[RMDB]
RNA sequence: GGGAACGACUCGAGUAGAGUCGAAAAGAAAGGCGCGCCUGACAUCUAAAUGGAGUUGCCGCGAGAAACUCUUAGGAAAUAAAACUGGGAGGAAAUCGCGGUUUUAUUUCCGCCUGUAGGCAAGAAAGGGUAAUCUUAUCUUCGGAUAAGAUUACCCAAAAGAAACAACAACAACAAC
Reactivity to DMS in 0.01 (KOAc 150mM, MgCl2 10mM, bicine 150mM(pH8.5), 24C), signal-to-noise 2, nucleotides 027 to 126: g030a030a030a050g000g000c040g020c130g020c010c040u010g010a140c050a060u000c120u050a070a110a100u020g000g020a050g040u000u000g000c040c030g020c010g000a010g020a250a130a110c010u000c000u000u000a000g010g000a100a100a120u010a050a060a070a190c010u000g000g000g000a000g000g020a050a050a190u010c000g040c000g030g020u000u000u000u010a020u010u010u020c000c020g000c040c070u080g000u010a060g000g010c020a110a050g010a090a090a100
Reactivity to 2A3 in 0.01 (KOAc 150mM, MgCl2 10mM, bicine 150mM(pH8.5), 24C), signal-to-noise 2, nucleotides 027 to 126: g080a060a060a030g030g000c040g000c010g020c060c020u040g070a040c030a070u040c010u190a140a150a010u210g020g010a010g010u070u020g000c000c030g000c000g000a030g070a050a130a000c020u000c000u010u020a010g000g070a000a110a190u120a090a160a090a050c000u000g050g070g030a010g010g090a080a100a030u030c010g010c000g020g000u000u000u000u000a000u000u030u000c000c000g010c000c040u010g040u140a050g010g060c080a030a040g060a140a050a010